[RMDB]
RNA sequence: GGGAACGACUCGAGUAGAGUCGAAAAUAAAAAGGUUGAUGAUCUUGGUGUAGAUGCAUUUUCUGAUCCUAGGGAGGCAGUGAUAGAAUUUUAUCGUAAAGCUGUCUUAUGGUUGGAAAUCCUGGGAAGUUAAUAUAGCUUUCGAGCUAUAUUAACUAAAAGAAACAACAACAACAAC
Reactivity to 2A3 in 0.01 (KOAc 150mM, MgCl2 10mM, bicine 150mM(pH8.5), 24C), signal-to-noise 1, nucleotides 027 to 126: u100a010a050a020a010a000g080g000u050u020g060a050u010g000a020u030c020u060u070g050g020u100g040u090a010g010a040u040g050c040a040u000u020u040u040c030u050g000a060u040c000c000u020a010g050g070g000a010g000g000c030a010g010u050g110a060u050a070g100a110a100u100u240u150u140a080u150c030g010u050a070a000a070g010c000u000g000u000c000u010u030a060u070g080g000u050u060g030g030a070a080a040u040c010c000u020g020g030g000a020
Reactivity to DMS in 0.01 (KOAc 150mM, MgCl2 10mM, bicine 150mM(pH8.5), 24C), signal-to-noise 5, nucleotides 027 to 126: u020a050a090a100a120a080g000g010u000u000g010a070u010g000a070u000c020u000u000g010g020u000g010u000a050g010a050u000g010c060a050u000u000u000u010c030u000g000a140u010c000c020u000a050g020g010g010a040g000g010c010a020g010u000g000a100u000a040g030a110a150u010u020u010u000a030u000c040g010u010a080a080a300g010c010u000g010u000c000u000u000a040u000g010g000u010u010g020g010a070a070a090u000c010c000u000g000g010g010a100